[RMDB]
RNA sequence: GGGAACGACUCGAGUAGAGUCGAAAACUACCCGGUGGAAACAACUGAAGCUUCAACGCCUUUUUUUCCGAUCUUCUUUAGCACCGGGCUAGGGAGUAAGCCCGUGGAACCUUAGUUUUGUUCCCUCGGGACUUACUUGUGGUUCCUGUGGUGCACUUACCUCCUGAAAGUUCGCUUUCAGGAGGUAAAAAGAAACAACAACAACAAC
Reactivity to 2A3 in 0.01 (KOAc 150mM, MgCl2 10mM, bicine 150mM(pH8.5), 24C), signal-to-noise 1, nucleotides 027 to 156: c050u070a090c000c000c000g050g020u060g000g050a070a070a090c050a030a040c120u040g150a260a020g040c030u100u120c120a110a110c140g080c000c040u050u040u030u030u030u080u020c040c000g080a150u060c010u090u000c000u050u140u090a040g000c000a010c030c020g000g000g000c050u120a120g000g130g000a000g020u070a010a010g000c010c010c010g000u010g010g010a000a010c000c000u090u010a160g020u140u250u240u180g000u010u020c030c000c060u070c010g060g000g060a080c000u000u010a000c010u000u000g080u040g050g000u060u300c030c020u040g120u140g000g010u000g000c040a000c020u050